[RMDB]
RNA sequence: GGGAACGACUCGAGUAGAGUCGAAAACUCGACAAGAGGCGGCGGUCCUCAGUGCUCUUACUCUUUGUUUGUAAAGAGGAGACUGCUGGACUCGCCGCCCAAGUUCGAGAGGGGCCAAAAUGCCGAAGGGGUGCCAUGUUCGCAUGGCACAAAAGAAACAACAACAACAAC
Reactivity to DMS in 0.01 (KOAc 150mM, MgCl2 10mM, bicine 150mM(pH8.5), 24C), signal-to-noise 3, nucleotides 027 to 129: c000u010c030g020a000c040a120a050g000a110g000g010c080g000g060c000g000g040u010c000c000u000c040a030g030u050g000c000u000c010u020u070a300c000u020c010u000u000u000g030u030u010u010g000u090a000a000a000g030a030g010g030a010g010a020c030u000g040c170u030g020g000a020c000u060c100g000c010c010g000c040c010c010a010a050g020u050u010c000g030a050g040a000g000g010g020g040c000c070a060a060a140a000u030g000c050c050g020a090a080g000g010g000
Reactivity to 2A3 in 0.01 (KOAc 150mM, MgCl2 10mM, bicine 150mM(pH8.5), 24C), signal-to-noise 7, nucleotides 027 to 129: c000u000c000g010a000c000a020a090g090a080g050g000c000g010g000c000g010g010u000c000c000u010c000a010g010u130g190c010u000c030u040u210a260c010u030c010u020u070u050g270u200u180u230g300u300a000a020a000g000a000g010g000a000g000a020c000u010g050c040u020g020g000a010c000u050c090g000c010c000g000c000c000c000a000a000g000u000u000c000g000a010g020a020g010g040g000g000c020c000a090a080a010a050u130g040c030c020g030a070a040g030g000g000